[RMDB]
RNA sequence: GGGAACGACUCGAGUAGAGUCGAAAAAGUUAGGUUCGCUAUGGUGCAACUCUUUAAGGCAAUAACGAACUAAUUCUAAGCAAGUAAUGGAGAAAUGCCAGGGUCACUAUCUAGCCUUAAUAGUGCUGUAAGUGACUUAGAUUCGUCUAAGUCACAAUGUAAUUAUCACUUUCGAGUGAUAAUUACAAAAAGAAACAACAACAACAAC
Reactivity to 2A3 in 0.01 (KOAc 150mM, MgCl2 10mM, bicine 150mM(pH8.5), 24C), signal-to-noise 9, nucleotides 027 to 156: a000g080u080u040a040g010g040u020u010c020g010c030u050a020u050g050g060u050g050c060a130a150c050u080c080u110u180u160a130a030g030g000c010a030a050u070a120a040c050g030a010a010c020u030a020a050u100u070c050u120a050a050g060c050a070a010g060u110a090a090u130g060g020a070g050a100a090a030u070g020c020c010a040g010g010g010u030c000a010c020u010a040u130c020u040a020g010c010c000u040u020a060a030u050a080g050u060g060c050u040g040u140a180a110g000u000g000a000c000u000u000a000g000a000u020u050c130g020u010c140u000a000a000g000u000c000a000c000a000a010
Reactivity to DMS in 0.01 (KOAc 150mM, MgCl2 10mM, bicine 150mM(pH8.5), 24C), signal-to-noise 5, nucleotides 027 to 156: a070g010u000u000a040g010g020u000u000c030g030c010u000a040u020g020g040u010g010c030a080a120c080u000c060u010u000u010a050a080g010g020c010a110a060u010a050a070c030g010a030a040c050u010a050a070u000u000c050u010a100a130g010c060a070a130g010u000a060a080u000g010g010a090g010a080a100a090u010g010c000c030a080g010g030g030u000c020a040c030u000a050u000c050u000a110g000c020c020u000u000a050a100u000a050g020u000g030c030u010g020u000a100a160g020u000g010a030c000u000u000a010g010a100u000u010c300g020u000c000u000a000a020g000u000c000a000c000a020a090